[RMDB]
RNA sequence: GGGAACGACUCGAGUAGAGUCGAAAAUUAAACGCAACGACUCGAGUAGAGUCGAAAACAAAACGACACGAGUAGAGUCGAAAACCCAACGACUCGAGUAGAGUCGAAGCGAACGCAAGCGAAAAAAGUUUUGAAUACUCUUCGGAGUAUUCAAAACAAAAGAAACAACAACAACAAC
Reactivity to 2A3 in 0.01 (KOAc 150mM, MgCl2 10mM, bicine 150mM(pH8.5), 24C), signal-to-noise 1, nucleotides 027 to 126: u050u120a080a150a150c300g000c300a020a040c000g000a000c000u000c010g000a000g020u070a020g020a000g000u000c000g000a000a000a000a000c300a300a300a000a010c000g020a000c000a300c000g010a030g070u100a030g040a010g000u020c000g020a080a070a010a000c090c090c090a000a010c000g000a000c000u000c000g020a010g030u060a020g010a010g000u000c000g000a030a000g010c000g070a070a020c000g010c210a070a070g010c020g170a040a090a000a000a000a030